This 207-nucleotide RNA was probed chemically with 2A3 and DMS. Source: RMDB library M2RFPK, as collected in RNAgym. Reactivities are rounded to 0.1 and cut off at 0 and 3. The RNA was probed in 150 mM KOAc, 10 mM MgCl2 and 150 mM bicine (pH 8.5) at 24 C.
RNA sequence: GGGAACGACUCGAGUAGAGUCGAAAAGCUUCCGUCGAACGCGAAAGUCGGACGGCGGCCAUGAGUCGCAACGCAAAGCCGCGGCAAGUGGAGUUAGCGAGAAGAGACUUGGCUUUGGUUUCUUCAAAUUAGUGAGUGUGGUUCGCCACACUCACAACUCUUCUCUCAUGUUCGCAUGAGAGAAGAGAAAAGAAACAACAACAACAAC
Reactivity to 2A3 in 0.01 (KOAc 150mM, MgCl2 10mM, bicine 150mM(pH8.5), 24C), signal-to-noise 3, nucleotides 027 to 156: g010c010u100u080c020c000g010u010c000g030a060a010c010g030c020g170a300a100a090g210u300c000g020g010a040c010g010g000c000g010g000c020c010a030u040g020a000g000u030c010g010c060a070a100c070g000c110a150a090a030g050c060c040g010c050g000g010c040a040a040g000u020g040g030a110g050u110u160a040g040c040g020a030g030a120a030g040a000g000a020c030u060u040g050g030c000u050u040u040g020g000u010u010u000c000u000u020c050a030a030a140u140u080a050g000u000g000a000g000u020g000u010g040g000u050u070c160g050c090c000a000c000a000c000u000c000a000c000a000a000
Reactivity to DMS in 0.01 (KOAc 150mM, MgCl2 10mM, bicine 150mM(pH8.5), 24C), signal-to-noise 1, nucleotides 027 to 156: g020c020u000u030c000c020g050u010c010g030a110a160c100g080c010g000a100a160a170g010u000c020g020g000a260c000g040g010c060g000g000c010c040a070u010g010a300g010u010c000g010c060a040a080c040g050c060a130a140a280g010c000c000g050c020g000g010c030a080a290g050u000g030g010a100g000u020u000a050g020c100g000a150g000a060a030g010a060g010a050c020u000u000g050g010c090u000u000u030g000g000u000u010u010c020u050u010c000a050a010a160u020u000a160g020u010g000a020g020u000g040u000g000g000u000u050c260g020c000c000a040c010a020c030u010c000a000c000a000a030